Description:
The record gives the reactivity of an RNA of 177 nucleotides to 2A3 and DMS. The RNA was probed in 150 mM KOAc, 10 mM MgCl2 and 150 mM bicine (pH 8.5) at 24 C. The DMS profile rests on 10,666 reads. DMS adducts were read by reverse transcription with MarathonRT. 2A3 adducts were read by reverse transcription with SuperScript II with manganese. Reactivities are given for positions 27 through 126.

[RMDB]
RNA sequence: GGGAACGACUCGAGUAGAGUCGAAAACUGUGUGCUGUACUGAUGUAUUUGUGUUUACCUACAUUUUCUAUGGCACCUGUUGAAUUUUAUGAAGACCGCAUCUUGGACUUUAAAGUUCUUGAUAAUGCUAUUAUUAUCUGUUCGCAGAUAAUAAUAGAAAAGAAACAACAACAACAAC
Reactivity to 2A3 in 0.01 (KOAc 150mM, MgCl2 10mM, bicine 150mM(pH8.5), 24C), signal-to-noise 6, nucleotides 027 to 126: c020u030g030u020g000u000g180c000u010g000u010a010c020u020g010a020u020g020u030a070u060u180u130g130u030g080u060u220u170a060c010c010u010a010c010a010u030u030u020u020c030u030a010u010g000g000c000a000c000c010u000g000u020u010g030a090a080u050u040u170u220a100u140g070a040a020g060a050c020c020g020c060a010u010c010u010u020g000g010a010c000u040u100u270a160a300a020g000u010u000c000u010u020g020a030u040a120a040u110g000
Reactivity to DMS in 0.01 (KOAc 150mM, MgCl2 10mM, bicine 150mM(pH8.5), 24C), signal-to-noise 7, nucleotides 027 to 126: c010u000g010u020g020u000g010c000u000g020u000a010c120u000g000a010u000g000u000a010u010u010u010g030u010g010u010u010u010a060c120c210u000a010c000a000u000u000u010u010c160u010a000u000g000g000c000a010c000c020u010g000u000u000g010a100a100u010u000u010u020a080u020g010a120a110g010a130c060c030g020c210a040u000c020u000u000g010g000a020c000u000u000u010a080a100a070g010u000u000c000u000u000g000a050u000a090a070u010g000